[RMDB]
This 177-nucleotide RNA was probed chemically with DMS and 2A3.
2A3 adducts were read by reverse transcription with SuperScript II with manganese.
Reactivities are given for positions 27 through 126.
For DMS the reverse transcriptase was MarathonRT.
For 2A3, 4,365 sequencing reads were counted.
RNA sequence: GGGAACGACUCGAGUAGAGUCGAAAAGGGUUAUAUCGAUAUGGAUCCGAGAGCUCUUGGAUUUAUGAGGUGGUCGGAAACGACCACGCAGUUGUCAGAGCUCCCGGAUCCUAAGUCAACGGGGGAACUUAGAUAUCAUCUUCGGAUGAUAUCUAAGAAAAGAAACAACAACAACAAC
Reactivity to DMS in 0.01 (KOAc 150mM, MgCl2 10mM, bicine 150mM(pH8.5), 24C), signal-to-noise 6, nucleotides 027 to 126: g010g000g000u000u000a090u010a100u010c080g000a090u000a300u010g010g010a010u000c000c000g010a020g000a020g000c010u000c000u000u010g040g010a020u000u000u000a020u010g000a300g000g010u000g000g010u000c000g000g010a100a090a220c000g010a010c000c000a000c000g010c020a240g000u000u000g000u000c030a030g000a020g010c000u000c000c010c000g010g000a000u000c000c000u000a000a060g000u000c050a070a100c150g000g000g000g010g010a140a230
Reactivity to 2A3 in 0.01 (KOAc 150mM, MgCl2 10mM, bicine 150mM(pH8.5), 24C), signal-to-noise 3, nucleotides 027 to 126: g170g000g010u240u150a260u060a020u300c100g020a020u070a060u240g020g000a020u010c000c020g010a010g010a000g010c010u000c060u180u260g220g020a110u300u300u130a090u120g030a040g000g170u010g010g000u000c000g000g000a030a100a050c010g000a010c000c000a000c010g000c000a000g010u100u070g030u010c000a020g000a000g000c000u000c010c000c000g000g010a000u000c000c000u000a010a000g000u010c030a000a130c060g000g000g010g000g000a010a010